This 177-nucleotide RNA was probed chemically with DMS and 2A3. For DMS the reverse transcriptase was MarathonRT. The data come from the RNA Mapping Database (RMDB), library RFMREP. The DMS profile rests on 14,934 reads. Reactivities are given for positions 27 through 126.
RNA sequence: GGGAACGACUCGAGUAGAGUCGAAAAUGCUCUGAUGACACAGGUAGCAAAUAGGAAGUGCCGUCAGAGCGAGAACUGACGAUCCUGGAGACGCGUGUCUGAGCCUCCCACUGUCUUCGGACAGUGGCGUAGGUUUAUGAUUCGUCAUAAACCUACGAAAAGAAACAACAACAACAAC
Reactivity to DMS in 0.01 (KOAc 150mM, MgCl2 10mM, bicine 150mM(pH8.5), 24C), signal-to-noise 8, nucleotides 027 to 126: u010g000c000u000c000u000g010a020u000g000a030c020a010c010a080g010g020u010a070g000c160a070a120a140u010a110g000g010a180a190g010u000g020c030c010g010u000c000a000g010a010g010c010g000a050g000a080a110c080u000g010a060c080g000a080u000c030c010u010g010g000a090g000a050c080g010c090g010u000g000u000c030u010g000a100g010c030c030u000c080c000c000a010c000u000g000u000c000u000u000c180g010g000a020c000a000g020u000g000g010
Reactivity to 2A3 in 0.01 (KOAc 150mM, MgCl2 10mM, bicine 150mM(pH8.5), 24C), signal-to-noise 9, nucleotides 027 to 126: u090g000c000u000c000u010g000a010u020g010a010c000a000c020a040g130g180u190a070g150c130a080a140a150u170a080g110g070a150a090g020u020g020c020c000g000u010c000a000g000a000g010c000g000a010g000a020a060c090u080g050a020c030g030a060u040c010c010u040g090g020a060g010a030c050g040c030g100u070g060u020c030u030g030a030g040c010c010u030c010c000c000a000c000u000g000u010c000u010u040c070g050g000a000c000a000g000u000g000g010